This 177-nucleotide RNA was probed chemically with 2A3 and DMS. For DMS, 6,480 sequencing reads were counted. 2A3 is a SHAPE reagent: it acylates the 2'-hydroxyl of flexible nucleotides of all four kinds. The 2A3 profile rests on 4,023 reads. DMS adducts were read by reverse transcription with MarathonRT. The reactions ran in a buffer of 150 mM KOAc, 10 mM MgCl2 and 150 mM bicine (pH 8.5), at 24 C.

RNA sequence: GGGAACGACUCGAGUAGAGUCGAAAAGGGUGAGGUCACAGUGGAGGAAAAACAGUCAAAGCUUGUUUGUUUUGGAUAAGGCCUCAGAUCUGGAGCUUAAGAUACACUAAUCCUGUAAAACCCAGGGGUAAGUAUGCGUAUUCGUACGCAUACUUACAAAAGAAACAACAACAACAAC
Reactivity to 2A3 in 0.01 (KOAc 150mM, MgCl2 10mM, bicine 150mM(pH8.5), 24C), signal-to-noise 4, nucleotides 027 to 126: g040g000g010u030g010a040g010g020u030c030a030c060a210g070u090g050g100a080g030g060a040a140a000a010a030c020a000g050u070c050a040a010a040g020c060u090u100g090u160u170u110g070u020u030u030u000g040g000a030u040a160a080g060g020c000c000u010c020a050g020a110u030c000u020g010g020a020g000c000u070u080a130a040g030a100u140a150c050a020c070u050a060a070u040c000c000u000g080u080a040a040a060a090c020c010c010a010g050g030g010
Reactivity to DMS in 0.01 (KOAc 150mM, MgCl2 10mM, bicine 150mM(pH8.5), 24C), signal-to-noise 5, nucleotides 027 to 126: g000g000g010u000g010a070g000g020u010c050a140c110a050g030u010g000g020a100g000g000a070a040a030a060a070c100a090g000u000c060a050a080a100g010c080u000u010g000u000u010u000g010u010u000u020u000g010g010a100u010a070a130g000g000c020c000u000c040a040g000a060u010c030u000g000g000a090g010c070u000u000a050a100g010a130u000a080c110a080c110u000a070a080u010c040c050u000g010u010a050a050a110a100c050c020c010a140g000g010g010